[RMDB]
RNA sequence: GGGAACGACUCGAGUAGAGUCGAAAAAGUUCUUCUCCGACCCACAGAAGAUCCAGUCCUUCAAAGCGGAGCUCGAUGGUCUGAUCGCGUCGAUCUCGACGCUGGUCGACCUGAUCAACAGCCUGGCUGCCGCGUUCUCGAAGGUGCCGGGGCUGUCUCUGAUUUCGAUAUUCGUAUCGAAAUCAGAAAAAGAAACAACAACAACAAC
Reactivity to 2A3 in 0.01 (KOAc 150mM, MgCl2 10mM, bicine 150mM(pH8.5), 24C), signal-to-noise 3, nucleotides 027 to 156: a000g050u030u010c000u060u000c010u000c030c020g170a200c000c010c010a040c030a050g040a040a020g000a000u030c060c050a030g090u060c020c000u050u060c080a060a030a040g020c030g020g040a020g020c070u110c100g110a080u100g000g020u020c120u250g000a000u000c000g000c000g000u010c000g020a300u060c140u140c190g020a010c030g000c100u120g000g000u000c000g000a000c000c000u000g030a050u020c040a040a040c010a010g000c000c010u020g010g020c040u110g040c000c000g030c030g030u170u040c110u070c090g060a090a030g030g010u010g000c020c000g020g000g050g000c010u010g020u020c020
Reactivity to DMS in 0.01 (KOAc 150mM, MgCl2 10mM, bicine 150mM(pH8.5), 24C), signal-to-noise 2, nucleotides 027 to 156: a070g000u010u010c030u000u000c000u000c000c040g030a170c050c010c040a190c130a150g000a030a040g000a040u000c030c050a100g000u000c030c020u000u010c050a050a070a160g030c030g000g000a060g040c070u000c020g000a160u020g000g030u000c030u010g030a010u000c010g000c020g030u000c000g030a110u000c220u000c020g010a060c060g020c020u000g060g020u000c010g010a040c010c000u000g000a120u020c030a070a060c040a100g010c010c000u000g020g000c020u010g010c080c010g000c070g000u000u000c060u000c040g020a060a090g010g030u000g040c000c010g010g010g010g040c020u000g010u010c070